[RMDB]
RNA sequence: GGGAACGACUCGAGUAGAGUCGAAAAGAUAUGGAAUAGCUGUAGUUUACGAAUAGGAACUACUUGCGAUCAUCGGAAACGAUGAUCGCAAGCCUAUUCGUAAACGCAGAUAGCUAUUCCUAAGUCAUCCAUAAUUAGUGUUCGCACUAAUUAUGGAAAAAGAAACAACAACAACAAC
Reactivity to 2A3 in 0.01 (KOAc 150mM, MgCl2 10mM, bicine 150mM(pH8.5), 24C), signal-to-noise 3, nucleotides 027 to 126: g020a010u100a070u220g000g010a010a000u010a010g010c020u030g020u130a150g010u110u000u000a000c000g000a000a000u010a010g050g010a070a050c120u240a080c000u300u000g000c000g000a000u000c000a010u000c010g040g040a040a060a060c050g010a000u000g010a000u010c010g000c000a000a000g000c000c000u000a000u000u000c000g000u000a000a000a000c000g000c000a010g060a020u150a000g000c000u010a000u010u040c000c000u000a070a020g060u030c030a070
Reactivity to DMS in 0.01 (KOAc 150mM, MgCl2 10mM, bicine 150mM(pH8.5), 24C), signal-to-noise 5, nucleotides 027 to 126: g000a040u000a300u010g010g010a020a000u000a000g010c010u000g010u000a110g000u000u000u000a000c000g000a030a010u000a000g000g000a090a030c050u020a300c010u000u000g010c000g010a010u000c000a020u000c000g010g010a150a090a200c010g010a020u000g000a000u000c000g000c000a000a000g000c000c000u000a010u000u000c000g000u000a000a000a010c000g010c250a080g010a060u000a020g010c000u000a010u000u000c000c000u000a010a090g010u000c030a180